RNA sequence: GGGAACGACUCGAGUAGAGUCGAAAAUGGUGAGAUGAUGACAAUUAUCUUUCAGGACUGACCUGAAAUGAAGAGAAUACUCAUUGCUGAUCACUUAAAGCCCUUCUCUGGUUCGCCAGAGAAGGGCGAAAUGUGACCUGUUCGCAGGUCACAUUUCAAAAGAAACAACAACAACAAC
Reactivity to 2A3 in 0.01 (KOAc 150mM, MgCl2 10mM, bicine 150mM(pH8.5), 24C), signal-to-noise 4, nucleotides 027 to 126: u130g000g010u000g020a030g010a090u070g000a010u030g010a030c020a030a040u110u030a050u080c020u000u010u020c010a040g030g040a120c140u230g160a260c050c000u010g020a020a000a020u210g040a070a020g090a000g060a100a040u040a090c020u000c010a010u050u070g090c070u070g050a090u030c010a020c040u100u090a200a050a090g010c010c000c050u000u010c010u000c000u000g030g040u040u070c180g020c040c000a000g000a000g000a010a000g000g010g000c000
Reactivity to DMS in 0.01 (KOAc 150mM, MgCl2 10mM, bicine 150mM(pH8.5), 24C), signal-to-noise 3, nucleotides 027 to 126: u010g000g020u000g000a010g020a150u000g000a010u010g000a070c090a060a110u010u000a070u000c050u000u000u000c020a000g000g020a300c270u020g000a120c030c000u000g000a010a020a040u010g010a030a220g010a140g020a070a050u010a120c300u000c010a020u000u000g000c150u010g000a210u000c010a020c030u000u010a070a040a240g020c010c000c000u000u000c000u000c000u000g000g000u000u010c290g000c010c000a000g000a020g000a000a000g010g020g020c000